About this RNA: This 177-nucleotide RNA was probed chemically with 2A3 and DMS. 2A3 is a SHAPE reagent: it acylates the 2'-hydroxyl of flexible nucleotides of all four kinds.
[RMDB]
RNA sequence: GGGAACGACUCGAGUAGAGUCGAAAACAUAAACGCUUCGGCGUUUAUGAAAUAAAAUCAGCGGUAAGCUCGCGUAAAAUAUUACCGCUGAACGCGAGCUUUAAACGGGACAGUUCGCUGUCCCGAACAAUUCUGUCAUGUUCGCAUGACAGAAUUGAAAAGAAACAACAACAACAAC
Reactivity to 2A3 in 0.01 (KOAc 150mM, MgCl2 10mM, bicine 150mM(pH8.5), 24C), signal-to-noise 1, nucleotides 027 to 126: c000a000u000a000a000a000c000g000c010u040u040c210g140g000c000g020u010u000u000a010u000g010a010a010a000u120a010a070a000a090u080c030a020g030c010g050g070u050a040a000g010c000u010c010g000c000g020u030a030a120a100a130u190a110u100u140a030c000c030g000c020u020g000a000a010c000g000c010g000a000g000c000u040u110u070a070a080a010c010g000g000g010a000c000a010g010u050u090c140g050c110u000g000u000c000c000c000g010a010a000
Reactivity to DMS in 0.01 (KOAc 150mM, MgCl2 10mM, bicine 150mM(pH8.5), 24C), signal-to-noise 3, nucleotides 027 to 126: c000a000u000a000a020a020c000g010c000u000u010c250g040g010c000g010u000u000u000a010u000g010a070a130a090u000a060a050a100a120u020c090a080g000c060g010g010u000a030a020g010c030u000c020g010c050g000u010a070a060a100a060u000a070u000u010a100c030c030g010c050u000g030a060a010c040g010c020g010a050g010c010u000u000u010a020a070a110c030g010g010g010a010c010a000g020u010u010c210g000c000u000g000u000c000c010c000g010a030a060